[RMDB]
RNA sequence: GGGAACGACUCGAGUAGAGUCGAAAAUAUCGUCGCUGUGAUUCGUUUUUAUUUUUCUUUUUAUUUCGCUUUACAAAUAAGAAUAGCAUGAUUGAAAAUACCACCAUCAUAGAACAUACAAUUGCUACAAUAUCUUCCGGUUCGCCGGAAGAUAUUGAAAAGAAACAACAACAACAAC
Reactivity to 2A3 in 0.01 (KOAc 150mM, MgCl2 10mM, bicine 150mM(pH8.5), 24C), signal-to-noise 1, nucleotides 027 to 126: u160a030u060c060g010u010c020g000c050u000g040u050g080a000u100u020c000g020u030u000u050u000u090a110u040u090u020u000u060c010u090u080u000u070u030a140u110u050u110c000g000c000u100u060u060a140c000a020a190a110u120a100a090g100a110a090u030a080g000c050a010u000g030a020u030u050g020a000a030a060a060u030a010c010c000a000c020c000a000u000c000a000u020a020g020a040a030c020a040u140a020c020a050a110u130u080g030c020u040a010
Reactivity to DMS in 0.01 (KOAc 150mM, MgCl2 10mM, bicine 150mM(pH8.5), 24C), signal-to-noise 1, nucleotides 027 to 126: u020a120u000c030g020u000c070g030c000u000g000u000g020a070u000u000c050g000u000u000u000u000u000a030u030u010u000u000u000c010u010u000u030u020u010a070u030u030u010c110g000c070u000u000u010a060c140a030a030a050u010a050a070g000a030a100u000a090g010c030a060u010g010a130u000u010g000a050a030a110a060u030a110c030c210a030c030c030a010u020c030a050u000a030g000a060a030c090a070u010a080c110a050a090u010u010g010c040u000a140
An RNA of 177 nucleotides, treated with 2A3 and DMS and read out base by base. For DMS the reverse transcriptase was MarathonRT. The data come from the RNA Mapping Database (RMDB), library OK2TST. The RNA was probed in 150 mM KOAc, 10 mM MgCl2 and 150 mM bicine (pH 8.5) at 24 C. For 2A3 the reverse transcriptase was SuperScript II with manganese.